[RMDB]
RNA sequence: GGGAACGACUCGAGUAGAGUCGAAAAGAUUAUUGCCGUCAGAAGGUAGAUCGUAUGGAUCUGAGGUUCUCCCUUGGGGCUGUUGGCGGUCUAAGUCUGCAUGUAAAAGUAGCAGGGAAAAUGAGUAUGCCCCUUGAUCAUUCGUGAUCAAGGGGCAAAAAGAAACAACAACAACAAC
Reactivity to DMS in 0.01 (KOAc 150mM, MgCl2 10mM, bicine 150mM(pH8.5), 24C), signal-to-noise 1, nucleotides 027 to 126: g000a110u010u010a070u010u000g000c010c010g040u030c080a040g000a070a140g010g010u000a010g010a020u000c010g010u000a170u000g000g020a040u000c000u000g000a070g000g000u000u000c200u000c200c040c020u000u000g000g000g000g000c030u000g010u000u010g040g030c050g000g020u000c060u000a020a180g000u000c010u000g000c070a050u000g000u000a040a100a140a170g010u000a060g010c070a030g010g020g000a060a040a070a070u000g000a090g020u010a160
Structure probing data (DMS) for a 177-nucleotide construct. The RNA was probed in 150 mM KOAc, 10 mM MgCl2 and 150 mM bicine (pH 8.5) at 24 C. The DMS profile rests on 904 reads. The data come from the RNA Mapping Database (RMDB), library OK2TST. Values are in units of 0.01, from 0 to 300, in steps of 10.